[RMDB]
Source: RMDB library OK1LIB, as collected in RNAgym. The record gives the reactivity of an RNA of 177 nucleotides to 2A3 and DMS. The 2A3 profile rests on 1,461 reads.
RNA sequence: GGGAACGACUCGAGUAGAGUCGAAAAGAGCCCGUUGCAUUCGAGCUUUUUCUUUUGCCGCCUGCUCGUUAUAUUGGACCGUUUCUUUGGCGGCUUUUUCGGUCCUUUAUUGCAUUCGGGCUCGAGAGGGACCGGUCGGCUUCGGCCGAUUGGUCCCAAAAGAAACAACAACAACAAC
Reactivity to 2A3 in 0.01 (KOAc 150mM, MgCl2 10mM, bicine 150mM(pH8.5), 24C), signal-to-noise 2, nucleotides 027 to 126: g000a000g000c000c000c000g000u010u020g010c000a000u000u130c000g010a010g000c020u190u090u020u150u240c040u070u270u070u100g030c010c000g000c010c000u000g000c010u000c000g070u150u050a070u010a010u120u000g000g000a000c000c000g050u070u110u150c150u110u120u040g040g010c010g070g000c070u130u080u010u020u020c000g000g000u010c010c000u000u020u000a060u010u020g000c000a010u010u140c000g000g000g000c000u000c000g000a000g000a010
Reactivity to DMS in 0.01 (KOAc 150mM, MgCl2 10mM, bicine 150mM(pH8.5), 24C), signal-to-noise 1, nucleotides 027 to 126: g000a010g030c010c000c020g000u010u000g000c030a100u050u020c010g000a010g030c030u000u010u050u030u080c040u030u030u030u000g000c020c020g020c040c030u020g000c000u010c000g010u000u020a050u010a000u010u000g000g000a010c000c000g030u000u010u030c130u000u050u030g030g020c030g020g020c010u000u020u010u000u000c010g030g000u000c000c020u000u000u000a030u010u020g030c010a040u020u010c010g000g000g010c010u010c000g010a050g010a250
The RNA was probed in 150 mM KOAc, 10 mM MgCl2 and 150 mM bicine (pH 8.5) at 24 C. Reactivities are given for positions 27 through 126.